[RMDB]
Conditions: 150 mM KOAc, 10 mM MgCl2 and 150 mM bicine (pH 8.5), 24 C.
Chemical mapping of a 177-nucleotide RNA with DMS.
For DMS the reverse transcriptase was MarathonRT.
Reactivities are given for positions 27 through 126.
It was measured as part of the RMDB library OK2TRN.
RNA sequence: GGGAACGACUCGAGUAGAGUCGAAAAAACGCCGGUAUUGCCCUCAACGACACCUUCGUCAAGUUGGUUUCCUGGUACGACAACGAGUGGGGGUACUCCAACAGACUGGUCGACCUGGCCAUCCACAUGUAAUAAGACGCUUCGGCGUCUUAUUACAAAAAGAAACAACAACAACAAC
Reactivity to DMS in 0.01 (KOAc 150mM, MgCl2 10mM, bicine 150mM(pH8.5), 24C), signal-to-noise 1, nucleotides 027 to 126: a110a090c120g010c030c000g010g000u050a080u000u020g060c000c020c040u020c090a060a180c060g000a040c070a080c160c120u000u000c100g020u010c100a110a060g020u000u000g020g000u000u010u010c010c040u010g000g000u020a030c000g000a090c060a070a030c030g000a180g030u010g000g020g000g020g000u000a050c070u010c040c030a110a050c080a090g020a070c130u000g000g000u000c020g000a070c070c040u000g000g010c010c060a030u000c030c010a040c130a130